Description
This 177-nucleotide RNA was probed chemically with 2A3 and DMS. DMS adducts were read by reverse transcription with MarathonRT.
RNA sequence: GGGAACGACUCGAGUAGAGUCGAAAAGAUAUGGACCCAUGUGUAGAGCGAUAAGAAGCAGUCGGAAACGACUGGCUUCUUUUGACGCUCUCUCAUGGGUCCUAAGUCAAAGAGUUCUUCGGAACUCGUUCUAGACUAUCUUCGGAUAGUCUAGAACAAAAGAAACAACAACAACAAC
Reactivity to 2A3 in 0.01 (KOAc 150mM, MgCl2 10mM, bicine 150mM(pH8.5), 24C), signal-to-noise 1, nucleotides 027 to 126: g020a030u100a050u140g000g010a000c010c030c000a000u010g040u000g100u240a000g000a010g010c020g020a070u020a120a000g000a000a000g030c010a000g000u000c000g040g000a060a070a050c010g000a000c010u000g040g000c000u010u030c010u000u030u000u040g040a000c040g010c010u000c000u000c000u000c010a030u000g000g000g010u010c000c000u000a020a000g010u000c010a050a000a050g010a000g000u000u030c020u070u080c190g120g000a010a000c010u000c080
Reactivity to DMS in 0.01 (KOAc 150mM, MgCl2 10mM, bicine 150mM(pH8.5), 24C), signal-to-noise 4, nucleotides 027 to 126: g000a050u000a300u010g010g000a000c000c000c000a010u000g000u010g010u010a000g000a000g020c000g010a200u010a030a020g010a000a000g010c000a030g000u000c010g000g020a180a120a260c010g010a020c000u000g020g010c000u000u000c000u000u000u000u000g010a240c060g010c000u000c000u000c010u000c000a000u000g000g000g000u000c000c000u000a010a080g000u010c050a120a100a160g000a020g010u000u000c000u000u020c190g020g010a010a010c000u000c010